[RMDB]
RNA sequence: GGGAACGACUCGAGUAGAGUCGAAAAGAUAUGGAACUACGGGAGCAAGCGAGCAUCGAUCGUAAUUGUAUCGGAAACGAUACAAUUACGGGAGCUCCUACUUGCGAAGAACGUAGUUCCUAAGUCAGUAUGUAGUCAUCUUCGGAUGACUACAUACAAAAGAAACAACAACAACAAC
Reactivity to 2A3 in 0.01 (KOAc 150mM, MgCl2 10mM, bicine 150mM(pH8.5), 24C), signal-to-noise 2, nucleotides 027 to 126: g030a010u110a050u170g000g000a020a000c000u020a020c030g020g000g050a080g000c000a020a000g040c010g050a010g000c090a300u300c060g170a130u080c020g050u010a010a010u010u000g000u020a010u020c010g020g050a080a070a070c010g010a000u000a020c010a000a010u010u000a010c030g020g000g000a000g000c000u000c010c010u050a100c020u010u000g020c040g150a230a030g030a020a020c000g000u000a000g010u000u000c000c000u010a020a000g040u000c030a040
Reactivity to DMS in 0.01 (KOAc 150mM, MgCl2 10mM, bicine 150mM(pH8.5), 24C), signal-to-noise 2, nucleotides 027 to 126: g000a080u010a300u000g010g010a000a030c010u000a000c000g020g010g000a100g000c000a020a000g030c180g020a030g010c030a300u000c220g000a100u000c000g010u000a000a010u000u000g010u010a000u000c010g030g000a110a090a230c000g000a010u000a000c010a000a010u000u000a000c000g000g000g020a070g000c000u000c000c090u010a040c010u000u000g000c020g010a100a200g000a110a150c010g000u010a020g000u000u000c000c000u000a000a090g010u000c020a130